RNA sequence: GGGAACGACUCGAGUAGAGUCGAAAACAGGUUAUCAUGACGAUCGGGGUAAAGGAUGGACUACUAUUGCGGUCUGAAUUGAGGACGUUUUGAUAAAUUAUUUUGAUAACCGUUCGAAUACUAAUAACGAAGUAAAACCUUUCGAGGUUUUACUUCGAAAAGAAACAACAACAACAAC
Reactivity to 2A3 in 0.01 (KOAc 150mM, MgCl2 10mM, bicine 150mM(pH8.5), 24C), signal-to-noise 5, nucleotides 027 to 126: c020a010g020g000u020u020a000u010c000a010u070g030a020c020g060a070u030c010g020g010g010g010u040a040a020a000g070g000a030u110g010g020a010c030u070a030c000u080a140u190u290g140c080g010g000u000c000u030g090a070a080u030u050g010a050g000g010a000c000g000u030u010u060u070g050a040u080a120a110a030u200u170a110u090u190u040u040g010a000u010a020a020c000c020g000u020u040c030g050a060a040u060a110c060u090a060a080u110a200a050
Reactivity to DMS in 0.01 (KOAc 150mM, MgCl2 10mM, bicine 150mM(pH8.5), 24C), signal-to-noise 4, nucleotides 027 to 126: c080a130g000g000u010u000a010u000c000a020u000g000a110c100g000a040u000c040g020g000g010g020u000a090a080a050g010g010a190u060g010g000a030c020u000a110c060u010a130u020u010g040c050g000g010u000c010u010g000a210a170u010u000g000a150g000g010a030c010g000u000u000u000u000g010a140u020a050a050a120u040u030a110u010u010u010u000g000a070u000a020a020c030c020g000u000u000c070g000a130a080u020a080c150u050a060a120u030a050a180

Source: RMDB libraries RFM100 and RFMREP, as collected in RNAgym. Chemical mapping of a 177-nucleotide RNA with 2A3 and DMS. DMS adducts were read by reverse transcription with MarathonRT. For 2A3 the reverse transcriptase was SuperScript II with manganese.